An RNA of 207 nucleotides, treated with 2A3 and read out base by base. The RNA was probed in 150 mM KOAc, 10 mM MgCl2 and 150 mM bicine (pH 8.5) at 24 C. Reactivities are given for positions 27 through 156.
[RMDB]
RNA sequence: GGGAACGACUCGAGUAGAGUCGAAAAGCCAUGUGCUGCGCACCAGCCUGGACGGGGCGCGGCGCUGCUUUGUGAAUGUCUGCAGCAACGCGUUGGUGGGCGCGCCCAGCAGCCGGCCCGGCUCCGGUGGCGACCGGGGCGCAGCUCCUGGCAGCCAGCCUGCAUCAUUAUUCGUAAUGAUGCAGGCAAAAGAAACAACAACAACAAC
Reactivity to 2A3 in 0.01 (KOAc 150mM, MgCl2 10mM, bicine 150mM(pH8.5), 24C), signal-to-noise 2, nucleotides 027 to 156: g020c000c000a000u020g010u030g000c010u000g000c010g020c010a040c050c020a000g010c000c000u080g020g140a020c070g010g000g010g010c300g020c040g110g020c020g010c010u010g000c000u070u170u130g100u060g130a230a200u280g050u100c060u020g000c000a010g000c030a050a150c080g050c030g070u030u110g110g090u050g030g050g030c050g020c030g020c030c000c000a070g050c050a020g020c030c040g000g000c010c010c010g110g020c040u030c000c000g020g070u040g020g050c050g040a050c070c060g000g000g000g000c000g000c000a000g000c000u000c000c010u000g000g000c010a010g020c000c000a010